[RMDB]
RNA sequence: GGGAACGACUCGAGUAGAGUCGAAAAACGAUCAAAGGCUGCACAGGCGUCGACAUCCCAUGGUGGAAUCGCAAUAAGAACCGCGGCAGCAAAGGUGUCUUCACGAGUUGCAGCGAGCGGUCCCUGUGGAUGUGAGACAAACCGAGCACGACCGCUCCAAAGUAGUAUGAUUCGUCAUACUACUUUGAAAAGAAACAACAACAACAAC
Reactivity to DMS in 0.01 (KOAc 150mM, MgCl2 10mM, bicine 150mM(pH8.5), 24C), signal-to-noise 3, nucleotides 027 to 156: a070c030g000a080u010c060a070a140a130g020g030c030u000g000c020a110c070a100g020g040c040g010u000c010g020a070c000a060u000c050c020c030a140u010g020g010u020g020g000a050a050u010c040g060c030a130a140u010a110a190g010a080a170c110c030g010c000g000g030c010a050g020c020a070a090a110g030g000u000g010u000c120u000u000c050a060c050g000a270g030u000u000g020c010a060g000c040g060a090g020c020g010g020u000c010c010c010u020g020u000g000g020a070u000g030u010g020a230g020a060c020a050a050a060c050c010g000a110g040c030a080c050g020a110c000c010g000c040u000c020
Reactivity to 2A3 in 0.01 (KOAc 150mM, MgCl2 10mM, bicine 150mM(pH8.5), 24C), signal-to-noise 7, nucleotides 027 to 156: a000c050g020a040u150c100a110a040a080g050g000c020u030g010c060a070c040a130g040g030c040g010u030c010g010a000c020a020u040c050c040c000a030u050g010g070u150g060g050a140a070u070c010g000c040a040a160u180a260a070g060a090a010c040c020g000c000g020g000c010a010g000c000a030a040a080g120g000u080g030u060c150u250u220c090a030c030g090a080g040u040u010g000c010a020g010c000g030a020g010c000g010g000u000c010c010c020u040g020u060g010g010a040u030g050u030g040a110g000a020c000a000a030a020c010c010g020a000g010c000a000c070g090a100c020c040g010c030u030c020